[RMDB]
RNA sequence: GGGAACGACUCGAGUAGAGUCGAAAAGAUAUGGACUCAUCAUCCAGCGAGACGAUCUAGUUUCGGAAACGAAACUAGGGAUCGCCAGAUGAGUGAGUCCUAAGUCAAAGCUGCGUUCGCGCAGCAACGCGUGUAUAUUGUUCGCAAUAUACACGCGAAAAGAAACAACAACAACAAC
Reactivity to 2A3 in 0.01 (KOAc 150mM, MgCl2 10mM, bicine 150mM(pH8.5), 24C), signal-to-noise 5, nucleotides 027 to 126: g050a010u070a060u190g010g000a000c000u000c010a020u000c000a000u000c020c030a010g010c020g030a030g080a260c050g020a040u030c010u010a000g000u000u000u000c000g030g020a070a060a030c010g000a000a000a000c000u000a010g010g000g010a020u010c000g000c010c010a020g010a010u020g020a050g300u070g010a000g000u000c000c000u030a160a020g050u030c050a100a050a090g000c010u010g000c000g050u050u150c300g000c000g000c150a010g010c000a020a010
Reactivity to DMS in 0.01 (KOAc 150mM, MgCl2 10mM, bicine 150mM(pH8.5), 24C), signal-to-noise 3, nucleotides 027 to 126: g010a060u000a300u010g010g000a020c000u010c000a070u000c000a010u000c000c040a250g010c010g010a020g010a120c300g010a050u010c000u000a000g000u000u000u000c000g010g000a140a140a190c010g000a020a010a000c000u000a000g010g000g000a030u010c000g020c000c050a110g000a010u000g010a030g040u010g020a010g010u000c000c000u000a000a070g000u000c030a120a170a180g010c010u020g020c000g020u010u010c300g020c010g010c010a010g010c010a040a040